[RMDB]
RNA sequence: GGGAACGACUCGAGUAGAGUCGAAAAUCCGGCUACGCUGUGCUGAUUGGAUCUCGCGUAUUCAAGCCGGCACACGUGAAGGGUAAGAUCGACCACCCUGAACUGGCAGACAUCAAGUUCCAGGUCGGAAAGACUGGUGGUUCGCCACCAGUCUUUCAAAAGAAACAACAACAACAAC
Reactivity to DMS in 0.01 (KOAc 150mM, MgCl2 10mM, bicine 150mM(pH8.5), 24C), signal-to-noise 2, nucleotides 027 to 126: u000c000c000g020g020c140u000a020c020g010c300u000g010u000g010c010u000g000a160u000u000g000g020a010u000c010u010c300g030c300g010u010a010u000u010c000a010a010g020c110c040g000g010c020a010c010a000c020g000u050g000a300a110g000g000g010u000a100a100g000a130u000c020g000a070c060c000a120c050c020c010u000g010a050a110c020u000g010g010c250a090g000a120c160a090u010c120a080a060g030u000u000c020c100a120g010g010u000c050g000
Reactivity to 2A3 in 0.01 (KOAc 150mM, MgCl2 10mM, bicine 150mM(pH8.5), 24C), signal-to-noise 1, nucleotides 027 to 126: u010c000c000g000g020c010u030a020c000g100c150u030g000u000g040c000u010g000a050u000u000g030g030a030u000c100u120c210g120c150g080u150a030u000u050c040a000a090g210c170c020g000g020c020a010c000a000c000g010u010g020a050a020g020g010g020u050a090a090g030a250u110c050g040a000c010c010a020c020c030c010u030g010a060a060c030u010g000g000c080a040g100a220c020a090u140c130a120a060g030u100u000c020c040a050g000g070u090c050g070

An RNA of 177 nucleotides, treated with DMS and 2A3 and read out base by base. The data come from the RNA Mapping Database (RMDB), library OK2TRN. For 2A3, 880 sequencing reads were counted.